[RMDB]
RNA sequence: GGGAACGACUCGAGUAGAGUCGAAAACUCUUGGGACUCAAAAUUAAGUAACUCAUUGCACUGCGAGGCGGCAACACACACCAGUUGGAGCAGUGAUUGAGAAUCAUGUGACACAUUCAGAUCCCACUUCCACCUCCUCCUCAUGGUGUGAUGGGGGUAGGUUCAGCUAAUUCGUUAGCUGAACCUAAAAAGAAACAACAACAACAAC
Reactivity to 2A3 in 0.01 (KOAc 150mM, MgCl2 10mM, bicine 150mM(pH8.5), 24C), signal-to-noise 1, nucleotides 027 to 156: c040u030c020u040u010g030g000g030a050c140u120c110a160a120a190a160u250u150a240a020g080u140a160a000c000u000c010a070u020u070g030c010a000c010u020g000c030g020a020g080g010c050g000g080c020a120a000c070a020c000a000c010a000c020c020a010g000u050u030g010g090a060g010c000a020g000u000g030a010u000u090g030a000g050a000a040u110c140a090u120g030u070g140a050c100a000c000a120u120u040c030a050g020a060u030c000c100c000a070c080u050u030c040c010a010c000c030u020c000c000u080c000c000u050c000a000u010g000g000u010g000u030g000a000u000g010g000g010g000g040